RNA sequence: GGGAACGACUCGAGUAGAGUCGAAAAAGAUGAAAUUAAGGACAUAUGGUACACUACUAAACCACCAGUACUAGAUGUGUACAAUCAGAAGUGUUACAACUUUGCUGAACCCGAGAUAAUAGAAAAAUCAAACAGCCACAUUGAACAAAGCACUGAAGUAAUGAACGUCAUUCGUGACGUUCAUUACAAAAGAAACAACAACAACAAC
Reactivity to 2A3 in 0.01 (KOAc 150mM, MgCl2 10mM, bicine 150mM(pH8.5), 24C), signal-to-noise 4, nucleotides 027 to 156: a000g060a030u130g030a030a020a180u120u120a150a010g030g020a040c040a090u190a130u160g050g000u030a010c020a000c020u170a020c010u050a120a160a060c020c040a030c030c050a040g020u070a050c050u040a010g030a110u050g010u000g030u030a010c010a030a050u080c010a010g050a140a020g020u010g020u060u040a020c010a130a040c030u040u060u090g010c020u020g000a040a040c000c000c060g020a010g020a090u220a110a030u120a110g180a090a060a030a000a000u040c060a040a050a040c020a040g020c030c000a030c010a080u060u090g010a070a040c060a110a060a030g080c060a030c110u080g020a060a060
Reactivity to DMS in 0.01 (KOAc 150mM, MgCl2 10mM, bicine 150mM(pH8.5), 24C), signal-to-noise 1, nucleotides 027 to 156: a040g010a140u000g000a020a080a210u000u000a100a200g000g000a040c000a070u000a080u000g020g050u000a060c010a090c060u000a280c000u000a000a070a090c050c060a080c030c020a100g020u000a110c080u010a110g040a120u000g000u010g040u000a020c090a090a120u000c090a110g010a040a030g030u020g020u000u000a070c090a080a110c060u000u000u020g000c000u010g020a010a100c050c040c060g010a130g000a030u000a060a060u010a180g020a040a020a060a060a140u000c000a060a090a070c070a090g020c000c060a060c020a100u000u000g010a000a100c060a040a080a090g020c030a100c080u000g000a100a240